[RMDB]
RNA sequence: GGGAACGACUCGAGUAGAGUCGAAAAAAUAAAUGCAAUACCAACUACCAAACAUAUUUCAUGGAGGAUUUAAUGAAACAAACUUGAUGUUGUAGAUGUUGAUGCAUCUUUCUGUAAACUUGGUCAAAAGCUAAUCAGUUUUCGAACUGAUUAGCUUAAAAGAAACAACAACAACAAC
Reactivity to 2A3 in 0.01 (KOAc 150mM, MgCl2 10mM, bicine 150mM(pH8.5), 24C), signal-to-noise 2, nucleotides 027 to 126: a000a000u220a000a040a060u150g000c000a030a040u060a120c000c000a010a000c000u060a020c050c000a130a000a060c000a050u100a060u000u100u020c000a000u080g080g020a070g120g020a030u000u170u290a060a030u170g060a000a000a060c000a000a120a040c040u030u070g000a030u060g130u020u030g010u030a000g000a090u080g080u050u090g050a040u230g080c020a000u000c010u020u140u050c000u050g030u080a030a070a220c120u000u070g000g000u090c060a000a300
Reactivity to DMS in 0.01 (KOAc 150mM, MgCl2 10mM, bicine 150mM(pH8.5), 24C), signal-to-noise 4, nucleotides 027 to 126: a050a040u020a030a050a040u000g010c060a050a050u010a100c070c010a060a050c060u020a050c060c090a040a070a110c060a070u000a100u000u010u020c040a010u000g010g020a120g010g000a130u010u050u020a050a020u010g000a050a020a040c160a060a060a100c170u010u000g000a050u000g000u000u010g000u010a040g000a070u000g020u000u000g000a110u020g010c050a010u000c040u010u000u000c050u000g010u020a050a050a040c100u000u010g010g020u020c120a040a070